[RMDB]
RNA sequence: GGGAACGACUCGAGUAGAGUCGAAAAGAUAUGGAAAUGACCCAAAGCAAUGUACAGCGAAGAACUCGGAAACGAGGGAGCUGUAUGACUUUGCAUUUCCUAAGUCAAAUCCGUGUUCGCACGGAAACUUAAUACGCUAGUUCGCUAGCGUAUUAAGAAAAGAAACAACAACAACAAC
Reactivity to DMS in 0.01 (KOAc 150mM, MgCl2 10mM, bicine 150mM(pH8.5), 24C), signal-to-noise 2, nucleotides 027 to 126: g010a040u000a300u010g010g010a000a010a010u000g000a230c250c220c050a020a010a010g010c070a110a070u010g010u000a010c010a000g000c010g010a100a140g010a120a170c010u000c000g000g010a080a070a150c000g000a010g000g000g000a070g010c000u000g000u000a000u000g010a070c010u000u000u000g010c000a010u000u000u000c000c000u000a060a130g010u000c040a060a090a100u000c000c000g020u000g020u000u010c240g020c020a010c000g000g000a020a040a090
Reactivity to 2A3 in 0.01 (KOAc 150mM, MgCl2 10mM, bicine 150mM(pH8.5), 24C), signal-to-noise 5, nucleotides 027 to 126: g020a010u060a030u120g010g030a000a010a000u030g100a130c080c070c000a020a000a000g020c060a090a030u190g000u020a010c000a010g020c030g210a300a030g120a140a080c000u000c010g020g050a080a070a040c000g000a010g020g020g010a020g000c010u010g000u010a000u020g040a050c010u010u000u010g000c000a000u000u000u000c000c000u030a150a020g070u040c040a070a050a130u000c000c020g000u000g010u030u100c300g010c070a000c000g010g000a010a000a000